[RMDB]
RNA sequence: GGGAACGACUCGAGUAGAGUCGAAAAGAUAUGGAAAUGAACUACCUGCCUCCCAUGCGUUGAAAUCGGAAACGAUGGAGCAUGUCGGGCAGGCAUUUCCUAAGUCAAAGCCAUCUUCGGAUGGCAACGGUUUAAUAUUGUUCGCAAUAUUAAACCGAAAAGAAACAACAACAACAAC
Reactivity to 2A3 in 0.01 (KOAc 150mM, MgCl2 10mM, bicine 150mM(pH8.5), 24C), signal-to-noise 8, nucleotides 027 to 126: g030a030u080a060u140g000g010a020a000a010u020g010a070a060c060u090a100c300c000u000g000c000c000u070c020c030c000a000u010g010c010g300u300u060g010a040a040a010u020c010g010g040a060a050a030c010g000a010u010g000g020a020g000c010a010u010g030u060c060g010g000g000c000a010g000g010c000a000u000u000u000c000c000u020a120a010g030u020c060a100a050a020g000c000c000a010u000c010u040u080c300g160g000a000u000g000g000c010a000a000
Reactivity to DMS in 0.01 (KOAc 150mM, MgCl2 10mM, bicine 150mM(pH8.5), 24C), signal-to-noise 7, nucleotides 027 to 126: g010a030u000a300u010g000g000a000a010a010u000g010a060a040c080u020a300c010c010u000g010c000c000u000c140c060c000a000u000g000c000g010u010u000g000a070a120a020u000c000g010g000a090a090a180c000g000a010u000g000g010a090g010c000a010u000g010u000c110g000g000g000c000a000g000g000c000a000u000u000u000c000c000u000a030a120g000u000c040a070a100a140g000c000c000a000u000c000u000u020c180g020g000a010u000g010g010c010a010a030

Chemical mapping of a 177-nucleotide RNA with 2A3 and DMS. For 2A3, 36,274 sequencing reads were counted. Conditions: 150 mM KOAc, 10 mM MgCl2 and 150 mM bicine (pH 8.5), 24 C. It was measured as part of the RMDB library TTRDEL.